[RMDB]
RNA sequence: GGGAACGACUCGAGUAGAGUCGAAAAGAUAUGGAAAUGUAAGGGAGCUCUGAGUGGGUGACGAAGAACGAGCUCGGAAACGAGCUCGGGAGUCACCGCAGAGCGACGAUCUUACAUUUCCUAAGUCCAGAACUAGCAAGUUCGCUUGCUAGUUCUGAAAAGAAACAACAACAACAAC
Reactivity to DMS in 0.01 (KOAc 150mM, MgCl2 10mM, bicine 150mM(pH8.5), 24C), signal-to-noise 1, nucleotides 027 to 126: g000a050u000a090u020g000g000a020a000a000u000g000u000a010a000g000g000g010a020g040c000u010c010u010g000a070g020u010g010g000g000u000g020a020c000g020a110a210g020a140a300c010g000a090g010c000u000c000g010g010a030a030a070c000g010a000g020c020u010c000g000g000g000a030g020u000c010a010c010c000g010c010a000g000a010g040c000g020a040c270g000a020u030c000u000u000a000c000a020u000u000u000c000c010u000a000a080g000u000c010
About this RNA: An RNA of 177 nucleotides, treated with DMS and read out base by base. It was measured as part of the RMDB library TTRINS. Values cover nucleotides 27 to 126. The DMS profile rests on 2,204 reads. The RNA was probed in 150 mM KOAc, 10 mM MgCl2 and 150 mM bicine (pH 8.5) at 24 C.